[RMDB]
RNA sequence: GGGAACGACUCGAGUAGAGUCGAAAAUCCACUAUGAAUCUAGUCACUAAAUAAACACAAUUAGCUACUGUGUGUAAUAGUGAGUGUUGAUAACACAAAAUAAUAGUAUAGUUUUGGAAGAUUAUCCGCGCCCUUGCUCCGUUCGCGGAGCAAGGAACAUAAGUACCUCCUUCGGGAGGUACUUAUGAAAAGAAACAACAACAACAAC
Reactivity to DMS in 0.01 (KOAc 150mM, MgCl2 10mM, bicine 150mM(pH8.5), 24C), signal-to-noise 1, nucleotides 027 to 156: u000c030c000a040c120u000a120u000g000a140a190u000c040u000a190g010u000c000a030c020u010a020a020a060u000a110a190a000c000a010c010a020a050u000u020a300g010c130u010a130c090u000g010u000g000u000g010u010a150a300u000a000g000u010g000a040g070u000g020u030u010g020a070u010a010a080c000a020c000a030a010a030a050u000a050a160u000a190g030u000a260u000a090g030u000u010u000u010g030g020a060a160g060a260u000u000a040u000c030c020g010c050g040c030c000c000u000u000g000c000u000c010c000g010u000u010c270g060c060g000g030a010g020c020a000a000g040g030a000a070
Reactivity to 2A3 in 0.01 (KOAc 150mM, MgCl2 10mM, bicine 150mM(pH8.5), 24C), signal-to-noise 2, nucleotides 027 to 156: u010c020c000a020c040u190a160u130g080a030a070u140c030u050a050g080u050c000a000c000u000a020a010a030u110a000a110a020c010a000c000a010a090u180u140a110g000c140u190a110c080u040g010u000g010u000g010u020a000a040u010a000g010u010g000a040g000u040g000u010u060g100a090u100a170a010c030a000c000a050a030a000a010u180a130a040u060a070g060u060a120u040a170g040u040u030u100u080g060g000a080a070g040a190u090u080a040u080c010c010g030c040g100c050c000c010u000u000g000c000u000c000c000g000u000u050c150g000c000g140g000a000g000c000a000a000g000g000a000a010